[RMDB]
RNA sequence: GGGAACGACUCGAGUAGAGUCGAAAAACUCAUGCGCGUUACGACGCGCAUGAGAACGUCGGAGAGAGAUAACAGGCUUUGGCUUUUUAUGUAUUUUAUUAGUCAGUCUUUUUCUCUCUCCUAUUAAUUGAUUCUACAAAUUCGUUUGUAGAAUCAAAAAAGAAACAACAACAACAAC
Reactivity to DMS in 0.01 (KOAc 150mM, MgCl2 10mM, bicine 150mM(pH8.5), 24C), signal-to-noise 1, nucleotides 027 to 126: a100c020u010c000a010u000g000c050g020c020g000u030u010a140c290g010a120c030g030c000g020c030a000u000g010a000g010a040a090c090g020u000c130g000g000a020g010a040g020a010g000a000u000a030a040c170a030g030g000c000u000u060u000g000g000c010u000u000u000u000u000a020u040g010u000a030u050u020u020u000a010u010u000a000g000u000c000a010g010u000c000u000u000u010u010u000c000u000c000u000c000u000c020c000u000a010u010u030a030a110
Reactivity to 2A3 in 0.01 (KOAc 150mM, MgCl2 10mM, bicine 150mM(pH8.5), 24C), signal-to-noise 2, nucleotides 027 to 126: a000c000u000c000a000u000g000c000g020c020g010u060u100a100c300g040a030c030g010c010g000c010a000u000g000a000g000a040a010c040g220u090c090g000g000a000g000a000g010a000g000a000u040a090a000c010a030g020g000c020u200u110u060g000g000c000u090u080u150u000u110a100u150g200u020a150u100u250u050u010a030u000u040a010g020u020c010a010g030u050c020u050u000u010u010u000c010u000c000u000c000u020c000c010u000a000u000u090a090a040